[RMDB]
RNA sequence: GGGAACGACUCGAGUAGAGUCGAAAAGUAACAAUCUUCGGAUUGUUACAUAGCCUCCAGGUGGAAUCCAAAACCUUAGAAAGAAAAGAGAAAGAAAAAGAAGUGACUACCUGUUCGCAGGUAGUAAGCAAAGCUUGUAAUUCGUUACAAGCUUUGCAAAAGAAACAACAACAACAAC
Reactivity to DMS in 0.01 (KOAc 150mM, MgCl2 10mM, bicine 150mM(pH8.5), 24C), signal-to-noise 1, nucleotides 027 to 126: g000u020a000a020c010a000a000u000c000u000u000c210g040g000a020u000u000g000u000u000a010c000a030u000a080g040c040c040u020c040c100a060g010g040u000g010g000a100a040u010c080c070a060a130a110a110c020c020u000u010a080g000a040a070a100g000a040a040a010a070g000a080g010a010a050a130g010a060a020a010a030a100g000a090a100g020u000g000a100c000u000a000c010c010u010g010u000u000c190g000c010a010g000g000u000a000g010u000a030a100
Reactivity to 2A3 in 0.01 (KOAc 150mM, MgCl2 10mM, bicine 150mM(pH8.5), 24C), signal-to-noise 1, nucleotides 027 to 126: g000u000a000a020c000a000a000u020c000u020u060c170g020g000a010u000u000g010u010u000a000c000a000u010a010g030c020c020u050c050c030a010g000g000u010g010g080a090a100u110c040c050a060a040a140a150c010c000u020u030a020g080a100a140a020g050a020a100a030a020g060a030g030a030a070a040g160a020a010a070a040a020g060a050a030g080u090g090a010c000u000a010c000c000u010g030u040u040c270g010c050a000g040g000u030a000g000u000a000a000